RNA sequence: GGGAACGACUCGAGUAGAGUCGAAAACAGCUUUUCGAAGCUGGGUGAUUCCUAAGUCAGUCGGGACGAUUGUCAGCUCCACUCGGAAACGAGUGCGAGCUUGGAUUUAUCGUUCUCUAGCGUGCUGAUAUGGACUGAACCACCCUUCGGGGUGGAACCAUAGACAGUUCUUCGGAACUGUCUAUGGAAAAGAAACAACAACAACAAC
Reactivity to 2A3 in 0.01 (KOAc 150mM, MgCl2 10mM, bicine 150mM(pH8.5), 24C), signal-to-noise 4, nucleotides 027 to 156: c000a000g000c010u050u070u150u290c280g130a030a000g010c000u000g000g020g040u090g040a200u090u050c020c000u030a090a020g040u000c010a000g000u040c040g030g010g000a000c000g000a000u010u010g030u010c010a000g000c010u000c000c000a010c010u000c000g030g010a080a110a100c010g000a000g000u010g020c090g000a000g000c000u000u040g000g010a000u080u230u110a020u020c010g030u120u000c040u010c030u050a030g060c070g170u240g010c010u010g010a020u010a080u160g040g040a040c070u100g040a090a060c000c020a000c000c000c000u010u100c300g020g010g000g000u010g000g000a000a000
Reactivity to DMS in 0.01 (KOAc 150mM, MgCl2 10mM, bicine 150mM(pH8.5), 24C), signal-to-noise 2, nucleotides 027 to 156: c000a020g010c010u000u000u000u000c200g020a030a030g050c010u000g000g010g020u000g020a140u010u010c000c000u000a100a240g030u000c010a040g020u000c040g000g020g000a040c030g030a010u000u010g020u000c020a110g000c010u000c000c010a010c000u000c000g030g010a200a160a240c010g010a040g030u000g010c110g030a020g000c030u000u000g010g020a070u000u010u000a010u010c000g010u000u000c010u000c050u000a120g040c140g040u010g020c010u000g000a060u000a220u000g000g010a160c120u010g000a130a230c010c010a010c000c010c010u000u010c280g050g030g000g030u000g000g020a000a060
Chemical mapping of a 207-nucleotide RNA with 2A3 and DMS.
For 2A3 the reverse transcriptase was SuperScript II with manganese.
For 2A3, 3,625 sequencing reads were counted.
It was measured as part of the RMDB library RNAMAK.
The RNA was probed in 150 mM KOAc, 10 mM MgCl2 and 150 mM bicine (pH 8.5) at 24 C.